[RMDB]
The record gives the reactivity of an RNA of 207 nucleotides to DMS and 2A3. The 2A3 profile rests on 7,034 reads. For 2A3 the reverse transcriptase was SuperScript II with manganese. In probing experiments dimethyl sulfate is read out at A N1 and C N3, which are open when not base-paired. The RNA was probed in 150 mM KOAc, 10 mM MgCl2 and 150 mM bicine (pH 8.5) at 24 C. Values cover nucleotides 27 to 156.
RNA sequence: GGGAACGACUCGAGUAGAGUCGAAAACGCUGUAGCCGCUUAAGGCUUAAGCCUCGAAACUGCUUGUGUCCGUGCUCGCAGCGUAGAGUCAUCAUCACGGAACCGCUGAGACGUGGCCGUCUGCCCAUCCUCGGUUAAAUCUAGCAGACUGGUUUCCACAUGAUGAAGUGUUCGCACUUCAUCAUGUAAAAGAAACAACAACAACAAC
Reactivity to DMS in 0.01 (KOAc 150mM, MgCl2 10mM, bicine 150mM(pH8.5), 24C), signal-to-noise 1, nucleotides 027 to 156: c100g010c040u000g000u000a030g030c010c010g060c270u010u000a060a150g000g010c010u000u010a150a070g000c030c000u000c020g010a110a120a050c030u000g000c000u000u010g020u010g000u000c010c030g000u000g010c000u000c100g040c010a000g040c020g000u000a230g000a080g010u000c110a120u010c130a060u000c050a040c020g040g020a020a050c040c030g040c080u000g000a070g000a060c060g000u000g020g020c040c030g090u010c000u010g010c030c030c010a050u000c020c010u000c000g040g040u000u010a180a050a040u010c190u030a030g050c010a030g000a020c000u000g030g010u000u000u000c000c020
Reactivity to 2A3 in 0.01 (KOAc 150mM, MgCl2 10mM, bicine 150mM(pH8.5), 24C), signal-to-noise 5, nucleotides 027 to 156: c030g010c010u020g040u090a010g000c010c010g090c300u300u300a230a060g000g000c000u000u010a020a000g000c000c000u020c010g040a070a020a010c000u000g010c010u030u020g020u010g010u000c000c000g000u010g000c000u000c010g000c000a010g000c010g030u030a020g010a010g080u040c030a160u090c030a040u150c000a010c000g000g000a000a000c010c010g000c030u020g010a010g000a040c020g010u010g010g000c020c010g000u000c000u010g000c000c000c000a020u010c010c010u010c000g000g000u010u010a020a040a040u160c200u160a020g000c000a000g010a000c020u030g090g020u020u000u000c010c010